Chemical mapping of a 177-nucleotide RNA with 2A3 and DMS. It was measured as part of the RMDB library TTRDEL. DMS adducts were read by reverse transcription with MarathonRT. The RNA was probed in 150 mM KOAc, 10 mM MgCl2 and 150 mM bicine (pH 8.5) at 24 C. The 2A3 profile rests on 2,160 reads. The DMS profile rests on 1,220 reads.
RNA sequence: GGGAACGACUCGAGUAGAGUCGAAAAGAUAUGGACCCUGUAGACAUGCGUGAAUCGGAAACGAUGAACGCAACAGCUACUGGGUCCUAAGUCAAAACUGCAACGACUCUUCGGAGUCGUUGCAGAAUCCUACUGAGGAGUUCGCUCCUCAGUAGGAAAAAGAAACAACAACAACAAC
Reactivity to 2A3 in 0.01 (KOAc 150mM, MgCl2 10mM, bicine 150mM(pH8.5), 24C), signal-to-noise 1, nucleotides 027 to 126: g000a000u020a000u040g010g010a010c010c000c010u010g000u010a040g060a190c140a300u170g000c030g000u010g000a050a000u000c010g030g030a030a010a010c030g010a010u000g000a040a000c000g000c010a040a020c090a020g000c000u000a010c000u000g010g000g000u010c000c000u000a000a010g020u020c000a020a010a120a170c000u000g040c010a020a000c000g040a000c010u090c000u130u200c300g050g020a000g040u000c000g000u000u000g010c010a010g010a000a000
Reactivity to DMS in 0.01 (KOAc 150mM, MgCl2 10mM, bicine 150mM(pH8.5), 24C), signal-to-noise 2, nucleotides 027 to 126: g000a020u010a180u030g010g010a010c000c000c000u000g000u000a010g010a150c130a180u000g020c000g000u000g020a180a000u010c000g050g000a030a050a050c000g000a000u000g000a260a010c030g020c000a030a070c290a060g000c000u020a010c000u000g000g000g030u000c000c000u000a000a040g020u000c030a060a080a210a120c020u010g000c010a010a050c000g000a010c000u000c000u000u040c270g010g000a010g020u010c010g000u000u000g000c000a000g010a040a080